[RMDB]
RNA sequence: GGGAACGACUCGAGUAGAGUCGAAAAGUGGGUCCUUGGACUUGGCUGCAAGACCAGUCCAGCUGAGGUGGGCUGGCCCAGCAUCUGCCGCCUUCAUUGUGCUUAAUGCUGGAUCCAUCUGUUUUCUGUCAAAGCCAGUGCCAACAAAUUACUAACCGGUUCAUUCGUAUUUCGAUACGAAUGAACCAAAAGAAACAACAACAACAAC
Reactivity to 2A3 in 0.01 (KOAc 150mM, MgCl2 10mM, bicine 150mM(pH8.5), 24C), signal-to-noise 2, nucleotides 027 to 156: g090u100g050g020g000u120c060c040u020u040g050g030a140c030u110u080g030g030c010u130g040c090a260a130g000a280c010c010a030g000u000c000c000a010g000c070u090g030a070g000g120u140g010g010g010c040u030g010g000c000c050c010a010g000c000a010u040c080u120g030c030c030g050c000c000u060u090c070a210u250u190g010u060g060c080u100u220a170a050u120g010c010u010g000g000a000u060c040c000a070u000c060u020g080u090u050u060u010c000u070g090u050c000a000a000a070g040c030c000a010g010u010g050c030c000a060a010c020a050a110a000u110u150a120c050u150a090a200c010c000